This 170-nucleotide RNA was probed chemically with DMS and 2A3. Reactivities are given for positions 27 through 129. It was measured as part of the RMDB library 15KLIB. The 2A3 profile rests on 2,601 reads. For DMS, 4,305 sequencing reads were counted.
RNA sequence: GGGAACGACUCGAGUAGAGUCGAAAAAACGAUCGCUUCACGCGGUGGGAGCAAGACCAUAGCGAUAGGAAGAGAUGCUAGGAGUUGGUGGCGACCGGAGCGAGGAGAAAAGCAAAGAAAGCAACGGAAACGGCCUUCUUCGGAAGGCCGAAAAGAAACAACAACAACAAC
Reactivity to DMS in 0.01 (KOAc 150mM, MgCl2 10mM, bicine 150mM(pH8.5), 24C), signal-to-noise 2, nucleotides 027 to 129: a110a070c150g000a000u040c080g000c000u050u000c160a110c150g030c050g000g040u050g030g000g000a050g200c210a040a030g020a120c020c000a150u090a150g000c200g060a000u040a150g100g040a000a000g000a040g050a040u040g000c050u010a050g000g000a110g020u040u010g000g100u000g010g000c060g030a020c000c100g000g030a070g060c090g000a040g050g010a020g040a130a000a100a120g050c000a040a060a120g040a040a020a140g000c140a050a080c110g000g000a040a100a130
Reactivity to 2A3 in 0.01 (KOAc 150mM, MgCl2 10mM, bicine 150mM(pH8.5), 24C), signal-to-noise 2, nucleotides 027 to 129: a000a030c070g040a050u090c050g020c000u100u040c090a020c110g000c030g090g050u040g040g030g000a020g040c090a060a000g030a060c000c000a050u080a010g000c020g050a030u080a030g000g020a070a000g000a000g000a010u090g050c050u060a000g010g080a050g020u160u110g090g040u070g010g020c020g040a030c000c000g020g000a000g000c000g020a050g020g030a060g040a030a100a010a000g070c020a050a040a000g020a050a090a000g020c030a030a030c050g060g000a020a000a010